[RMDB]
RNA sequence: GGGAACGACUCGAGUAGAGUCGAAAAUACAUAGUGGAAACACCAGGGCCACAUUACUUAGGUAUCAAGAUGUACGACGUGGAACUAGCUUAUUAAAUUGGCAAAACAUAGACACCAAGAAAUAGAAUCCAUCGAUUAAGUUCGCUUAAUCGAUGGAAAAAGAAACAACAACAACAAC
Reactivity to 2A3 in 0.01 (KOAc 150mM, MgCl2 10mM, bicine 150mM(pH8.5), 24C), signal-to-noise 1, nucleotides 027 to 126: u140a000c070a030u180a040g020u050g040g000a050a000a000c040a000c050c060a000g000g020g000c060c020a020c000a040u030u090a060c080u020u070a060g120g000u060a060u140c050a120a000g000a140u110g010u040a060c050g030a030c050g040u050g020g030a020a010c060u030a060g070c000u020u090a020u020u190a160a110a200u070u080g030g010c060a170a000a000a000c090a000u060a020g040a030c040a000c030c000a010a010g140a060a100a000u200a050g090a030a060
Reactivity to DMS in 0.01 (KOAc 150mM, MgCl2 10mM, bicine 150mM(pH8.5), 24C), signal-to-noise 2, nucleotides 027 to 126: u000a130c090a070u000a050g020u000g000g000a120a100a090c070a100c080c070a050g000g000g000c030c060a070c060a120u010u000a040c070u010u000a070g030g030u000a040u000c030a040a050g020a090u000g030u000a030c100g020a100c090g010u000g000g000a060a070c070u000a040g010c060u000u010a060u000u000a030a040a110u000u000g000g040c070a030a040a040a090c070a080u000a040g000a060c090a040c020c010a020a040g020a020a010a090u010a120g000a100a120